An RNA of 177 nucleotides, treated with DMS and 2A3 and read out base by base. DMS adducts were read by reverse transcription with MarathonRT.
RNA sequence: GGGAACGACUCGAGUAGAGUCGAAAAUCUCAGCCCCUCCACCUUGGGGUGCCCUAUCCGAGCACUGCAGUUUCGGUAGAAAGGCUAAGCACCUCGCAAUGAGGUAAGGUGGGACUUUUCCUUCAGGCCUCCCAUACUAGUUCGCUAGUAUGGGAGGAAAAGAAACAACAACAACAAC
Reactivity to DMS in 0.01 (KOAc 150mM, MgCl2 10mM, bicine 150mM(pH8.5), 24C), signal-to-noise 1, nucleotides 027 to 126: u020c040u010c020a220g010c000c010c010c000u010c000c000a040c000c000u000u000g000g000g000g020u000g020c030c020c000u000a120u030c000c000g000a020g020c060a130c130u000g010c180a180g010u000u000u000c010g010g000u000a000g000a080a240a090g010g040c030u020a100a080g040c160a130c000c000u000c000g020c170a090a090u000g030a010g000g000u000a000a010g020g000u000g000g010g000a060c180u010u000u000u010c010c000u000u010c080a120g020g010
Reactivity to 2A3 in 0.01 (KOAc 150mM, MgCl2 10mM, bicine 150mM(pH8.5), 24C), signal-to-noise 1, nucleotides 027 to 126: u000c010u000c000a030g000c000c010c000c010u000c000c010a040c000c010u030u050g000g000g020g000u030g000c000c000c010u000a000u060c000c000g000a000g070c040a020c090u270g110c030a090g020u110u260u050c000g000g020u010a000g000a050a060a000g010g000c000u000a030a010g050c020a010c010c000u000c000g030c140a220a300u300g000a010g000g030u000a000a010g020g000u000g010g010g010a020c000u090u100u080u130c000c050u040u090c070a020g180g000

2A3 is a SHAPE reagent: it acylates the 2'-hydroxyl of flexible nucleotides of all four kinds. The RNA was probed in 150 mM KOAc, 10 mM MgCl2 and 150 mM bicine (pH 8.5) at 24 C.